[RMDB]
An RNA of 177 nucleotides, treated with 2A3 and DMS and read out base by base. 2A3 adducts were read by reverse transcription with SuperScript II with manganese. The RNA was probed in 150 mM KOAc, 10 mM MgCl2 and 150 mM bicine (pH 8.5) at 24 C. The 2A3 profile rests on 3,541 reads. The DMS profile rests on 2,715 reads. Reactivities are given for positions 27 through 126.

RNA sequence: GGGAACGACUCGAGUAGAGUCGAAAAAGAUUUUAGACGUUUUGGAAAAAAUCAAUCCGGCCAGCACGCUUUUUAUCGUGGCUUCUAAGACUUUUUCCACUCAAGAAACCUUAACCAACGCCCUAACUCGAUGAUAAUAUUUCGAUAUUAUCAUCGAAAAAGAAACAACAACAACAAC
Reactivity to 2A3 in 0.01 (KOAc 150mM, MgCl2 10mM, bicine 150mM(pH8.5), 24C), signal-to-noise 3, nucleotides 027 to 126: a020g040a040u030u020u020u040a070g010a050c060g020u040u070u200u250g020g040a040a030a020a060a020a050u050c010a030a070u010c030c030g020g000c020c020a060g050c020a030c020g060c040u240u260u100u180u230a080u300c020g020u010g050g030c000u040u000c040u040a060a000g000a010c000u040u000u000u010u000c010c020a030c010u020c020a030a040g030a090a040a030c010c020u030u020a040a050c040c010a050a000c040g040c020c000c000u040a070a050c010
Reactivity to DMS in 0.01 (KOAc 150mM, MgCl2 10mM, bicine 150mM(pH8.5), 24C), signal-to-noise 3, nucleotides 027 to 126: a050g000a070u000u010u000u000a100g010a200c180g010u000u010u010u010g000g010a010a030a040a050a040a030u010c030a060a160u000c190c090g010g000c070c140a070g010c100a030c050g000c160u000u010u010u010u010a050u000c050g010u000g000g010c010u000u000c060u010a050a100g010a050c030u000u000u000u000u000c010c020a060c090u000c030a050a070g000a050a050a040c020c010u000u000a070a100c100c070a040a090c170g000c010c010c020u000a090a090c170